Structure probing data (2A3 and DMS) for a 207-nucleotide construct.
The reactions ran in a buffer of 150 mM KOAc, 10 mM MgCl2 and 150 mM bicine (pH 8.5), at 24 C.
RNA sequence: GGGAACGACUCGAGUAGAGUCGAAAAAGCGCUGUCCUAUGUUGUCCCUUUCCCAGUCAAAGUGUAUCCAACAGUUUCUGCGGGGGACGUAGCCGAGUUCCUCGGCUGCUUGGAAACCCAGCUUCUGCAAAGGGGGAUCGCCUAGGAACUGAAAGACCAAACGGGUAAAAUUCGUUUUACCCGUUUGAAAAGAAACAACAACAACAAC
Reactivity to 2A3 in 0.01 (KOAc 150mM, MgCl2 10mM, bicine 150mM(pH8.5), 24C), signal-to-noise 1, nucleotides 027 to 156: a000g070c050g010c080u030g000u040c010c010u060a040u060g020u000u130g020u000c010c000c000u030u050u000c020c000c000a020g030u050c070a000a040a070g030u070g050u080a040u060c000c010a040a050c030a070g000u030u100u090c060u110g040c050g000g010g010g010g000a010c010g010u020a010g060c050c020g050a000g070u210u140c010c010u000c010g000g020c030u010g000c040u010u030g040g050a080a060a030c000c000c000a050g000c000u130u020c010u190g000c090a150a060a120g020g010g010g020g010a020u070c040g000c010c020u030a020g050g030a020a060c000u040g100a120a120a050g100a040c160
Reactivity to DMS in 0.01 (KOAc 150mM, MgCl2 10mM, bicine 150mM(pH8.5), 24C), signal-to-noise 1, nucleotides 027 to 156: a140g020c050g010c050u010g000u010c020c070u020a100u010g010u010u000g020u000c010c010c020u000u000u000c010c050c040a140g030u020c050a050a070a090g050u000g040u000a150u010c020c020a060a190c040a020g010u000u010u000c030u010g020c050g040g010g030g000g000a070c110g040u000a030g030c070c050g020a110g030u000u010c070c040u000c040g010g010c000u000g020c030u010u010g020g030a070a080a170c010c030c030a170g030c010u000u010c070u010g050c040a080a160a160g050g000g000g040g030a090u000c080g000c000c010u000a080g000g000a040a060c030u020g000a060a090a140g000a140c140
Source information: The 2A3 profile rests on 613 reads. It was measured as part of the RMDB library OK3TST. DMS adducts were read by reverse transcription with MarathonRT.